An RNA of 177 nucleotides, treated with 2A3 and DMS and read out base by base. The reactions ran in a buffer of 150 mM KOAc, 10 mM MgCl2 and 150 mM bicine (pH 8.5), at 24 C. For DMS the reverse transcriptase was MarathonRT. For 2A3 the reverse transcriptase was SuperScript II with manganese. For DMS, 1,307 sequencing reads were counted.
[RMDB]
RNA sequence: GGGAACGACUCGAGUAGAGUCGAAAAGCAGUACGGUUCGCCGUACUGCAAAGGCACAUGCAAAACCGGUGCGAAACCAUAAACGGAAAGCCAAGCAUGAAAAAACAGGGACCUUCGGGUCCCUGAAGUCCUCUUAGUAGUUCGCUACUAAGAGGACAAAAGAAACAACAACAACAAC
Reactivity to 2A3 in 0.01 (KOAc 150mM, MgCl2 10mM, bicine 150mM(pH8.5), 24C), signal-to-noise 2, nucleotides 027 to 126: g010c000a000g000u000a000c000g010g060u030u100c210g040c080c000g000u000a010c010u010g000c010a000a000a040g000g000c050a040c000a120u040g000c010a020a000a040a110c020c020g010g000u040g000c040g020a120a050a060c050c000a060u190a080a290a010c000g010g000a100a060a000g000c020c040a060a000g000c020a010u070g050a040a130a000a000a010a040c000a010g030g010g000a000c010c000u040u110c130g110g010g020u000c000c010c000u020g000a000a000
Reactivity to DMS in 0.01 (KOAc 150mM, MgCl2 10mM, bicine 150mM(pH8.5), 24C), signal-to-noise 2, nucleotides 027 to 126: g010c010a010g000u000a000c030g010g020u000u020c190g030c020c000g020u000a000c020u000g000c000a010a060a020g020g060c110a080c030a050u010g020c070a060a020a120a140c060c050g000g010u000g000c040g020a060a130a070c090c040a060u000a070a070a120c160g020g010a050a110a150g000c040c040a050a120g000c030a000u020g000a000a040a050a080a160a110c000a010g050g030g020a020c000c000u000u000c140g060g020g020u000c000c000c000u010g000a020a030